[RMDB]
RNA sequence: GGGAACGACUCGAGUAGAGUCGAAAAAAGAAGGGCGUGUGCGUGCAGGUCAAACUAUUGUUGAAGCGACUGCUGGUAAUACAGGCAUAGGGUUAGCUAUUGCAGCGAAUAGACAUCAUUUGAAAUGUACCCUCCAACAGUUCGCUGUUGGAGGGUAAAAAGAAACAACAACAACAAC
Reactivity to 2A3 in 0.01 (KOAc 150mM, MgCl2 10mM, bicine 150mM(pH8.5), 24C), signal-to-noise 2, nucleotides 027 to 126: a000a000g110a010a050g010g000g000c030g000u040g020u070g050c000g030u080g000c070a040g000g000u060c040a000a000a040c100u090a120u150u270g040u030u040g050a020a000g050c040g020a040c100u050g000c000u000g040g000u100a040a000u040a090c010a010g110g000c100a090u130a070g040g000g000u000u030a020g000c020u010a040u060u190g060c040a060g000c000g030a000a000u150a090g010a000c060a050u010c020a000u120u070u110g030a080a040a000u000g010
Reactivity to DMS in 0.01 (KOAc 150mM, MgCl2 10mM, bicine 150mM(pH8.5), 24C), signal-to-noise 1, nucleotides 027 to 126: a080a020g010a150a080g000g000g020c030g000u040g000u030g000c090g000u000g020c050a060g030g000u000c110a040a100a080c070u010a170u020u010g010u030u030g000a080a240g000c050g130a120c090u000g020c000u000g000g000u000a010a100u050a120c060a020g000g030c110a000u000a070g000g000g000u000u050a210g000c140u000a070u000u010g000c000a010g000c040g010a050a100u000a100g020a090c070a060u000c010a030u000u020u000g000a060a110a070u010g010